[RMDB]
RNA sequence: GGGAACGACUCGAGUAGAGUCGAAAAGGAAAUAAUGCACAUAAUCCAGUCGCAGACGCUAAAAAUAACGCUGCGUCGCGACGGAUGUGGCAACGCACACCGAAGUGCAAACGGUAGCGUUAAAAAACAUUGUUACCACGUUCGCGUGGUAACAAUGAAAAGAAACAACAACAACAAC
Reactivity to 2A3 in 0.01 (KOAc 150mM, MgCl2 10mM, bicine 150mM(pH8.5), 24C), signal-to-noise 3, nucleotides 027 to 126: g140g020a050a070a080u140a080a050u130g050c060a070c010a300u190a160a100u120c020c020a080g000u010c000g000c040a060g000a000c010g000c040u110a050a030a030a080a150u250a160a080c120g060c180u090g000c010g010u000c010g000c000g000a000c000g000g000a000u000g010u020g000g020c030a010a010c000g000c000a040c010a010c080c010g040a110a000g170u210g150c010a050a070a020c010g010g000u010a010g000c010g020u040u040a060a060a010a000a000a000
Reactivity to DMS in 0.01 (KOAc 150mM, MgCl2 10mM, bicine 150mM(pH8.5), 24C), signal-to-noise 2, nucleotides 027 to 126: g010g010a080a030a080u010a050a100u010g020c010a080c010a050u010a180a080u000c010c010a150g010u000c000g000c000a110g050a020c020g040c010u020a020a060a030a100a080u010a080a110c220g010c160u000g030c000g030u010c020g000c000g020a010c000g010g010a020u000g010u000g000g020c050a050a010c030g010c000a030c110a050c040c000g000a050a060g000u000g010c160a100a110a080c010g000g020u000a020g010c000g010u000u030a000a030a030a040a040a070

Overview
The data come from the RNA Mapping Database (RMDB), library M2PK90. Structure probing data (2A3 and DMS) for a 177-nucleotide construct. 2A3 is a SHAPE reagent: it acylates the 2'-hydroxyl of flexible nucleotides of all four kinds. For DMS the reverse transcriptase was MarathonRT. Conditions: 150 mM KOAc, 10 mM MgCl2 and 150 mM bicine (pH 8.5), 24 C. The 2A3 profile rests on 3,293 reads.